Notes:
The record gives the reactivity of an RNA of 177 nucleotides to 2A3 and DMS. The reactions ran in a buffer of 150 mM KOAc, 10 mM MgCl2 and 150 mM bicine (pH 8.5), at 24 C. DMS adducts were read by reverse transcription with MarathonRT.
RNA sequence: GGGAACGACUCGAGUAGAGUCGAAAAUGAUGGUGCCCGCGGGGAACAUCACCACCGCGGUGAUCGAAGAGCUGGCCAACACGCUCGAGGCCGGCGACAUUGUGAUCGACGGUGGCAACACCUAUUACCGAGUGGUCAUAUUCGUAUGACCACUCGGAAAAGAAACAACAACAACAAC
Reactivity to 2A3 in 0.01 (KOAc 150mM, MgCl2 10mM, bicine 150mM(pH8.5), 24C), signal-to-noise 1, nucleotides 027 to 126: u040g030a000u040g040g130u170g030c020c040c080g000c170g090g010g000g010a000a080c010a070u010c040a020c010c000a050c020c070g070c000g100g060u010g050a060u090c000g020a080a010g040a030g050c010u000g010g110c000c010a000a110c110a030c090g210c050u140c130g030a170g000g050c000c000g000g000c000g010a010c000a060u090u130g030u110g050a010u010c000g040a110c030g010g000u010g060g050c030a030a030c020a070c010c010u150a140u130u180a090
Reactivity to DMS in 0.01 (KOAc 150mM, MgCl2 10mM, bicine 150mM(pH8.5), 24C), signal-to-noise 1, nucleotides 027 to 126: u000g000a040u000g040g000u020g000c060c000c030g030c190g050g010g020g000a080a080c030a030u000c040a040c000c010a070c000c050g000c040g000g000u000g020a050u010c020g040a000a030g040a300g010c000u000g000g000c040c000a040a230c190a030c160g000c070u020c030g000a290g010g000c010c010g000g010c010g000a030c300a000u000u000g040u000g000a150u000c000g000a040c030g000g000u000g000g000c150a150a110c130a040c030c000u000a080u000u000a170